RNA sequence: GGGAACGACUCGAGUAGAGUCGAAAAAGACCACAAAGGGCAACAAAGAGAGAUGGCAAGUUCCACUAUCAUGGGCCAGGCACCUGGAGGGGAGUGAUGGAUGGAGUGCAGGUGCAGAUAGACAUAGCGUCUGACCUAAAUUCGUUUAGGUCAGACGAAAAGAAACAACAACAACAAC
Reactivity to DMS in 0.01 (KOAc 150mM, MgCl2 10mM, bicine 150mM(pH8.5), 24C), signal-to-noise 3, nucleotides 027 to 126: a100g020a140c020c000a110c190a040a110a050g000g040g010c090a040a050c130a070a110a050g000a040g010a090g000a050u010g010g000c020a060a080g000u020u020c040c010a070c040u040a030u030c100a070u030g000g000g000c000c020a040g020g010c070a070c060c000u020g010g000a080g000g010g010g010a040g000u040g020a080u000g020g040a150u040g000g000a050g000u010g030c010a030g000g000u010g000c020a040g000a120u020a030g020a050c180a140u010a060g020
Reactivity to 2A3 in 0.01 (KOAc 150mM, MgCl2 10mM, bicine 150mM(pH8.5), 24C), signal-to-noise 3, nucleotides 027 to 126: a020g020a000c030c000a070c060a060a030a050g120g080g020c050a100a000c010a050a180a010g100a020g020a010g010a030u060g010g000c000a100a000g030u060u070c000c000a040c010u090a030u200c030a070u130g010g000g070c040c020a040g030g000c050a040c020c040u010g000g020a070g020g010g000g020a010g050u180g020a060u120g050g030a030u070g040g030a070g100u070g060c010a010g030g000u010g000c020a020g020a060u090a000g080a050c030a100u220a050g050